Structure probing data (2A3 and DMS) for a 177-nucleotide construct.
For DMS the reverse transcriptase was MarathonRT.
Source: RMDB libraries RFM100 and RFMREP, as collected in RNAgym.
[RMDB]
RNA sequence: GGGAACGACUCGAGUAGAGUCGAAAAUCGUAGUUGGGAUUGACAUAUGUAAUUAUGUCAUGAACGUGGAAUUCCUAGUAGUUGGUAGUCACUAACGACUAACGAAUGAGUCCCUGUUCUUUGUACAGUAAUUAGUGGCGUUCGCGCCACUAAUUACAAAAGAAACAACAACAACAAC
Reactivity to 2A3 in 0.01 (KOAc 150mM, MgCl2 10mM, bicine 150mM(pH8.5), 24C), signal-to-noise 1, nucleotides 027 to 126: u050c030g000u010a020g010u030u050g080g060g000a080u000u020g000a010c020a000u000a000u080g160u090a220a190u140u020a000u000g000u000c000a000u000g070a010a030c010g000u030g000g080a010a150u100u120c020c000u000a010g160u060a010g080u040u260g010g000u080a080g170u140c000a000c010u100a230a000c000g010a000c000u030a180a000c000g020a020a070u120g060a010g140u050c000c010c000u010g050u010u000c000u100u000u030g080u050a110c040a170
Reactivity to DMS in 0.01 (KOAc 150mM, MgCl2 10mM, bicine 150mM(pH8.5), 24C), signal-to-noise 2, nucleotides 027 to 126: u010c070g020u000a050g010u010u010g000g000g020a150u000u000g010a010c010a030u000a000u010g030u010a070a110u000u000a000u010g000u000c000a030u010g020a220a130c140g000u010g010g020a130a070u000u000c000c070u000a060g020u010a060g000u010u000g010g000u000a110g000u020c080a150c030u000a040a030c060g000a000c000u000a040a000c110g010a030a060u020g010a190g000u000c000c020c010u000g020u000u000c030u010u000u000g010u020a090c300a120

The RNA was probed in 150 mM KOAc, 10 mM MgCl2 and 150 mM bicine (pH 8.5) at 24 C.